[RMDB]
Chemical mapping of a 177-nucleotide RNA with 2A3 and DMS. The reactions ran in a buffer of 150 mM KOAc, 10 mM MgCl2 and 150 mM bicine (pH 8.5), at 24 C. It was measured as part of the RMDB library RFM100. DMS (dimethyl sulfate) methylates the pairing face of unpaired adenines and cytosines.

RNA sequence: GGGAACGACUCGAGUAGAGUCGAAAAACAUAGAGUAUAUAUGCCAUACAAGUUUUAUUCCCUCCGUGAAAUCGGUAAAAAUAUAAAUAUAAAAGCACGUUCUAGUAACAAGAAAUUCUUGUGAAAGUUGACAUUAUAUUUUCGAAUAUAAUGUCAAAAAAGAAACAACAACAACAAC
Reactivity to 2A3 in 0.01 (KOAc 150mM, MgCl2 10mM, bicine 150mM(pH8.5), 24C), signal-to-noise 2, nucleotides 027 to 126: a000c020a000u150a050g130a060g030u050a040u030a010u000a060u240g070c060c010a020u060a010c050a140a100g010u010u000u040u110a020u030u020c000c000c030u040c020c000g000u030g140a040a030a030u120c000g000g020u040a000a030a000a190a000u150a090u250a160a080a070u220a020u080a100a130a140a060g020c030a080c050g010u090u060c020u030a010g010u050a020a000c000a000a000g020a050a300a100u220u080c030u030u020g020u000g050a110a040a050g030
Reactivity to DMS in 0.01 (KOAc 150mM, MgCl2 10mM, bicine 150mM(pH8.5), 24C), signal-to-noise 1, nucleotides 027 to 126: a020c000a080u050a160g010a300g020u010a010u030a110u010a130u030g040c020c060a040u020a010c070a070a190g020u040u000u010u030a200u120u060c000c010c010u010c010c000g000u010g010a080a230a110u060c000g000g010u020a000a090a050a100a070u110a140u110a120a030a080u100a150u020a120a080a110a120g010c160a020c130g000u000u010c000u020a060g000u010a020a010c000a000a000g000a110a100a100u010u000c000u000u000g050u000g000a060a080a090g010
Background:
For DMS, 1,258 sequencing reads were counted. 2A3 adducts were read by reverse transcription with SuperScript II with manganese.